[RMDB]
RNA sequence: GGGAACGACUCGAGUAGAGUCGAAAAUCAGCCUGGCCGAAGUGAAGACUGCAAUUGUUUAUGCGUCCGACCGCGUCGCGGCGCCGGAACUGGUUGAAGCCUAUCGCUUUCCGGCGGAUAGCCAUGAUAAAUCAGGGGUAUUCGUACCCCUGAUUUAAAAAGAAACAACAACAACAAC
Reactivity to DMS in 0.01 (KOAc 150mM, MgCl2 10mM, bicine 150mM(pH8.5), 24C), signal-to-noise 6, nucleotides 027 to 126: u000c050a070g010c030c010u010g020g000c280c120g000a050a050g010u000g000a040a050g000a050c020u000g000c030a050a040u000u000g020u000u000u000a090u020g000c040g010u000c010c010g000a090c120c160g010c210g010u000c070g010c170g020g010c030g010c010c060g010g010a020a030c090u010g020g010u000u000g000a050a050g000c040c030u000a110u000c030g010c020u000u000u000c040c020g010g000c000g010g000a050u000a110g010c030c040a070u010g010a190
Reactivity to 2A3 in 0.01 (KOAc 150mM, MgCl2 10mM, bicine 150mM(pH8.5), 24C), signal-to-noise 1, nucleotides 027 to 126: u070c010a000g020c000c030u130g060g000c040c000g080a020a000g000u030g040a030a010g020a000c040u080g020c040a040a080u030u030g070u130u150u040a060u090g000c000g020u000c010c010g030a030c030c130g160c080g100u060c030g010c070g000g000c000g000c010c000g040g010a050a020c020u080g040g030u030u090g030a000a000g000c060c000u170a280u220c030g000c000u060u000u050c020c040g000g000c000g000g010a020u050a040g050c030c020a070u080g040a050
An RNA of 177 nucleotides, treated with DMS and 2A3 and read out base by base. It was measured as part of the RMDB library OK2TST. Reactivities are rounded to 0.1 and cut off at 0 and 3. The reactions ran in a buffer of 150 mM KOAc, 10 mM MgCl2 and 150 mM bicine (pH 8.5), at 24 C. Reactivities are given for positions 27 through 126. The DMS profile rests on 9,085 reads. For 2A3, 1,666 sequencing reads were counted.